[RMDB]
RNA sequence: GGGAACGACUCGAGUAGAGUCGAAAAGUCGAUGACGAUCGCAUCGACCCGAUCCAAUCGGCGCAAACUCUCCGGCCGUAACGGCAACACCGCGUGCUGAUCAGCCAAACCUUGGCCGAGCGCCGCGCUAAACUGCCAUCUUCGGAUGGCAGUUUAGAAAAGAAACAACAACAACAAC
Reactivity to 2A3 in 0.01 (KOAc 150mM, MgCl2 10mM, bicine 150mM(pH8.5), 24C), signal-to-noise 8, nucleotides 027 to 126: g000u010c010g000a020u020g020a180c090g060a190u170c160g010c050a060u030c030g020a020c000c000c010g030a030u020c010c020a030a070u060c010g010g000c010g000c050a080a100a200c030u060c010u030c100c000g010g010c000c020g070u100a110a080c080g020g020c030a050a020c030a040c060c030g090c060g090u150g010c080u060g030a170u110c070a010g030c010c010a080a080a200c030c080u090u190g010g000c000c020g010a020g040c030g000c010c000g000c000g000
Reactivity to DMS in 0.01 (KOAc 150mM, MgCl2 10mM, bicine 150mM(pH8.5), 24C), signal-to-noise 5, nucleotides 027 to 126: g000u000c000g020a000u010g000a110c170g000a030u040c090g000c030a090u020c030g010a080c030c060c020g010a130u020c030c030a140a060u060c020g010g000c010g010c090a120a090a120c150u010c040u010c060c040g000g010c000c040g010u030a100a100c090g000g000c050a160a050c140a160c230c070g020c030g010u040g020c100u050g030a060u010c110a100g000c010c020a060a160a140c220c170u000u000g000g020c020c030g000a070g010c010g010c010c000g010c280g000
This 177-nucleotide RNA was probed chemically with 2A3 and DMS. Reactivities are given for positions 27 through 126. 2A3 adducts were read by reverse transcription with SuperScript II with manganese. Conditions: 150 mM KOAc, 10 mM MgCl2 and 150 mM bicine (pH 8.5), 24 C.